[RMDB]
RNA sequence: GGGAACGACUCGAGUAGAGUCGAAAAGAUAUGGAUGUAGGUACACUUCGAAGAACUUCGUCGGAAACGACGAAGGGAGAAGGUACUACAUCCUAAGUCAAAAGUCCGACCGUUCGCGGUCGGACAACAAUUGCAUAGUGUUCGCACUAUGCAAUUGAAAAGAAACAACAACAACAAC
Reactivity to DMS in 0.01 (KOAc 150mM, MgCl2 10mM, bicine 150mM(pH8.5), 24C), signal-to-noise 6, nucleotides 027 to 126: g000a030u010a300u010g000g000a010u000g010u000a010g010g010u010a020c010a200c040u000u000c000g000a130a180g000a150a190c000u000u000c000g020u010c000g010g000a110a120a230c010g000a010c000g000a010a010g000g010g000a060g010a020a020g000g010u000a010c000u000a010c000a010u000c000c000u000a010a090g000u010c030a080a140a170a150g000u000c000c000g010a020c000c000g020u000u010c260g030c000g020g010u000c000g000g000a000c000a030a110
Reactivity to 2A3 in 0.01 (KOAc 150mM, MgCl2 10mM, bicine 150mM(pH8.5), 24C), signal-to-noise 7, nucleotides 027 to 126: g020a020u080a030u160g000g010a000u020g010u030a040g230g130u140a060c300a200c150u040u020c040g300a300a070g010a040a020c010u000u000c000g010u010c000g000g060a080a080a070c010g000a000c000g000a000a000g000g000g000a020g000a010a010g050g000u000a010c000u000a000c000a000u000c000c000u010a020a030g050u000c020a080a080a120a090g000u000c000c000g000a010c000c010g020u070u160c300g010c010g180g000u000c000g010g050a000c000a000a000
The data come from the RNA Mapping Database (RMDB), library TTRDES.
The record gives the reactivity of an RNA of 177 nucleotides to DMS and 2A3.
For DMS the reverse transcriptase was MarathonRT.
For DMS, 10,789 sequencing reads were counted.